An RNA of 177 nucleotides, treated with DMS and read out base by base.
For DMS the reverse transcriptase was MarathonRT.
The RNA was probed in 150 mM KOAc, 10 mM MgCl2 and 150 mM bicine (pH 8.5) at 24 C.
Values cover nucleotides 27 to 126.
The data come from the RNA Mapping Database (RMDB), library M2PK90.
The DMS profile rests on 971 reads.

[RMDB]
RNA sequence: GGGAACGACUCGAGUAGAGUCGAAAAAAAUGGGCUGAAGUUGGGAGAGCAGUAGUCUGCUUUUCAAACAGAGUGGAACCGCGCGGUUAAAGCGUCUCUGUCAAAAAGAAAAAGAAAACAAAUUGAAGUGUAACCAUAGUUUCGACUAUGGUUACACAAAAGAAACAACAACAACAAC
Reactivity to DMS in 0.01 (KOAc 150mM, MgCl2 10mM, bicine 150mM(pH8.5), 24C), signal-to-noise 1, nucleotides 027 to 126: a030a040a080u000g000g030g000c060u010g030a040a050g010u010u000g030g000g000a000g010a050g010c000a040g010u000a160g010u000c020u010g010c030u020u000u000u000c110a110a090a010c040a070g000a090g040u000g030g020a070a100c130c080g000c020g000c020g000g000u000u000a040a040a170g030c020g000u000c020u010c020u000g010u030c050a060a050a020a060a090g000a030a050a020a070a040g010a080a050a020a070c150a050a050a130u010u000g020a090a090